[RMDB]
RNA sequence: GGGAACGACUCGAGUAGAGUCGAAAAGAUCAGCAGCUCAAUGAUCAAAGUUGGUUGGACAGACUACUGGCGGAUCCCAUAGCAGCAGUUGCCGCUGGUGGAGGUUGGUUGCUGGCGAUACUGGCCGGCAGGCCCUUAGGUUCGCCUAAGGGCCUGCAAAAGAAACAACAACAACAAC
Reactivity to DMS in 0.01 (KOAc 150mM, MgCl2 10mM, bicine 150mM(pH8.5), 24C), signal-to-noise 1, nucleotides 027 to 126: g010a080u000c010a030g020c070a060g000c040u000c090a060a100u010g010a050u010c080a080a150a100g010u000u000g010g000u000u010g030g000a140c100a070g000a140c090u020a040c040u010g010g000c000g010g010a090u010c000c040c030a050u010a110g000c050a040g020c020a070g030u000u000g010c030c030g040c010u010g000g010u000g020g000a050g010g020u000u000g020g000u000u000g000c010u000g000g010c030g000a120u000a040c110u000g020g020c020c040g020